[RMDB]
RNA sequence: GGGAACGACUCGAGUAGAGUCGAAAAGACUGCCCUUUGCUCCAAGUAAUUUUUGGCGAUUUUUAAAGUAAUUUUUCCGGCGGAGUCAUAGUGGCGCUAUACUCUCGGACAGGUUAUCCUGUCUCUCCUAGGGUAUUAAGUUCGCUUAAUACCCUAGAAAAGAAACAACAACAACAAC
Reactivity to 2A3 in 0.01 (KOAc 150mM, MgCl2 10mM, bicine 150mM(pH8.5), 24C), signal-to-noise 2, nucleotides 027 to 126: g030a020c060u090g010c010c000c000u010u010u010g020c000u000c010c010a130a080g020u080a050a300u040u090u080u150u180g110g000c040g000a010u010u030u050u060u300a080a140a020g000u040a090a120u030u060u030u050u030c020c010g090g010c060g050g020a000g040u080c050a000u010a050g060u150g060g000c020g000c010u060a050u020a070c030u030c020u040c030g030g000a000c020a000g050g030u230u230a120u220c010c000u030g000u010c000u040c000u000c000
Reactivity to DMS in 0.01 (KOAc 150mM, MgCl2 10mM, bicine 150mM(pH8.5), 24C), signal-to-noise 2, nucleotides 027 to 126: g010a140c090u000g000c030c010c010u000u000u000g010c020u000c020c010a070a300g010u020a070a040u010u000u000u010u010g010g020c100g000a060u010u000u010u010u020a060a110a260g010u010a040a040u000u010u000u010u000c060c010g010g030c280g000g000a030g010u000c050a020u010a020g020u000g030g010c030g020c080u000a070u020a130c110u000c020u000c060g010g010a020c010a020g010g010u010u010a140u010c000c000u000g000u000c010u000c120u010c110